[RMDB]
This 177-nucleotide RNA was probed chemically with 2A3 and DMS.
For DMS, 2,268 sequencing reads were counted.
Reactivities are given for positions 27 through 126.

RNA sequence: GGGAACGACUCGAGUAGAGUCGAAAAGAUAUGGACAAGCUACCCACCUCCGAAAGCCGAAGAACCUAGUUAUAAUCGGAAACGAUUAUAACUAGGGGAGGCUCAAGGAGAGGCUUGUCCUAAGUCACUCCAUAUUAAACUUCGGUUUAAUAUGGAGAAAAGAAACAACAACAACAAC
Reactivity to 2A3 in 0.01 (KOAc 150mM, MgCl2 10mM, bicine 150mM(pH8.5), 24C), signal-to-noise 2, nucleotides 027 to 126: g060a110u270a230u280g000g000a000c000a000a000g020c010u290a300c060c010c010a040c000c000u050c000c000g100a140a030a000g000c000c010g160a300a030g000a030a050c000c010u010a000g000u000u000a010u000a010a000u000c010g030g000a080a070a050c010g000a000u010u000a010u000a020a000c010u000a000g000g000g000g000a020g000g000c000u000c010a000a020g000g010a010g010a000g010g000c000u000u010g020u000c000c000u010a010a000g110u050c070a010
Reactivity to DMS in 0.01 (KOAc 150mM, MgCl2 10mM, bicine 150mM(pH8.5), 24C), signal-to-noise 3, nucleotides 027 to 126: g020a140u030a180u010g000g000a000c000a000a000g020c000u000a190c030c010c050a300c130c000u000c000c000g020a300a130a030g000c000c000g020a210a200g020a210a220c020c000u000a000g000u000u000a000u000a010a010u020c010g000g000a080a080a200c000g010a020u000u000a000u010a000a000c000u000a020g000g000g000g010a060g020g010c010u000c020a050a300g000g000a020g020a110g010g000c000u000u000g000u010c000c000u010a000a050g000u020c150a210